[RMDB]
RNA sequence: GGGAACGACUCGAGUAGAGUCGAAAAUAGCAGGACAUAGCCGUUAUGCGCGAAGCGGUGUAGCGUCACUUUGAUGGCGGUACUAUGAAUUGAUGAAAGGUGUGGAGCGACCUUAAACAGUUCUGGUUUGACGGCUUUCAGUUCGCUGAAAGCCGAAUACUCUCGCAACUUUCGAGUUGCGAGAGUAAAAAGAAACAACAACAACAAC
Reactivity to 2A3 in 0.01 (KOAc 150mM, MgCl2 10mM, bicine 150mM(pH8.5), 24C), signal-to-noise 3, nucleotides 027 to 156: u120a030g030c020a000g010g040a120c020a030u050a040g010c000c000g030u090u090a110u150g070c070g010c010g060a030a000g030c040g020g030u060g020u040a030g040c010g000u000c020a030c140u260u170u300g160a220u100g040g010c020g000g000u010a020c000u040a040u080g030a060a090u090u090g040a070u080g100a060a040a020g020g020u050g020u090g000g010a020g000c000g010a000c000c000u140u190a150a040a010c020a030g000u010u000c000u020g130g000u040u080u170g060a030c000g000g000c000u000u020u000c000a020g000u020u070c090g020c100u030g000a000a000a000g000c000c000g000a000a000